[RMDB]
RNA sequence: GGGAACGACUCGAGUAGAGUCGAAAAGACUACCAGUUCGCUGGUAGUCAAAGGGAAACGGGAAGGGGGCGGCGUCCGCCGUAACAAACGCAAAAAGAAAAAAAAGACGAAGCUUCGGCUUCGUCAACACAUCGAUAGUAUUCGUACUAUCGAUGUGAAAAGAAACAACAACAACAAC
Reactivity to 2A3 in 0.01 (KOAc 150mM, MgCl2 10mM, bicine 150mM(pH8.5), 24C), signal-to-noise 5, nucleotides 027 to 126: g010a000c000u000a000c000c000a000g010u020u050c170g050c100u010g000g000u000a000g000u000c000a000a000a010g020g000g010a110a170a060c110g010g010g050a080a160g070g030g010g020g000c000g000g000c020g040u110c110c140g000c010c000g010u020a010a030c040a050a080a010c070g010c130a030a080a040a070a030g210a120a090a020a020a010a000a010a000g000a000c010g000a010a000g010c000u040u120c200g030g000c000u000u000c000g020u000c000a000a000
Reactivity to DMS in 0.01 (KOAc 150mM, MgCl2 10mM, bicine 150mM(pH8.5), 24C), signal-to-noise 3, nucleotides 027 to 126: g000a010c010u000a010c000c000a000g010u000u010c190g030c000u000g010g010u000a010g010u000c000a000a060a120g010g000g000a080a080a120c150g010g020g000a110a100g000g000g010g000g000c030g000g010c020g010u010c130c130g020c020c030g000u000a040a090c080a030a090a060c190g020c150a040a050a090a070a100g030a060a010a020a030a060a030a110a130g000a020c000g010a000a010g000c000u000u010c200g020g010c000u000u000c000g020u000c000a030a060

Structure probing data (2A3 and DMS) for a 177-nucleotide construct. The reactions ran in a buffer of 150 mM KOAc, 10 mM MgCl2 and 150 mM bicine (pH 8.5), at 24 C. The data come from the RNA Mapping Database (RMDB), library M2PK50.